[RMDB]
Notes:
An RNA of 177 nucleotides, treated with 2A3 and DMS and read out base by base. The 2A3 profile rests on 2,309 reads. Conditions: 150 mM KOAc, 10 mM MgCl2 and 150 mM bicine (pH 8.5), 24 C.
RNA sequence: GGGAACGACUCGAGUAGAGUCGAAAAGAUAUGGAGGUUUGAAAGCCGAUAAGCUGGGUAUCGGAAACGAUAUUAGCUUUUGACGGCUUCAAACCUCCUAAGUCAAACUGUUCGUUCGCGAACAGAACUAACAUUCACUCUUCGGAGUGAAUGUUAGAAAAGAAACAACAACAACAAC
Reactivity to 2A3 in 0.01 (KOAc 150mM, MgCl2 10mM, bicine 150mM(pH8.5), 24C), signal-to-noise 2, nucleotides 027 to 126: g020a000u070a030u200g010g010a020g000g070u020u040u000g230a300a180a020g000c080c190g010a080u160a140a000g020c020u270g250g010g170u000a000u000c000g060g000a080a020a000c000g000a000u000a010u050u050a000g010c030u000u030u040u120g290a250c160g000g000c010u000u000c000a000a000a000c000c000u000c000c000u000a020a000g000u000c010a040a030a040c010u010g010u020u020c020g020u040u090c300g040c030g200a000a010c000a030g020a040a030
Reactivity to DMS in 0.01 (KOAc 150mM, MgCl2 10mM, bicine 150mM(pH8.5), 24C), signal-to-noise 2, nucleotides 027 to 126: g000a040u000a300u000g000g020a020g000g000u010u000u010g010a050a020a040g040c000c000g060a160u000a020a010g020c000u000g020g010g050u000a000u010c000g010g010a040a090a110c000g020a040u000a020u010u010a040g010c000u000u000u000u010g030a110c160g000g000c000u000u000c000a000a010a020c000c000u010c000c010u010a000a050g010u030c040a180a170a210c010u000g000u020u000c000g000u010u020c300g040c000g000a020a000c010a000g010a140a210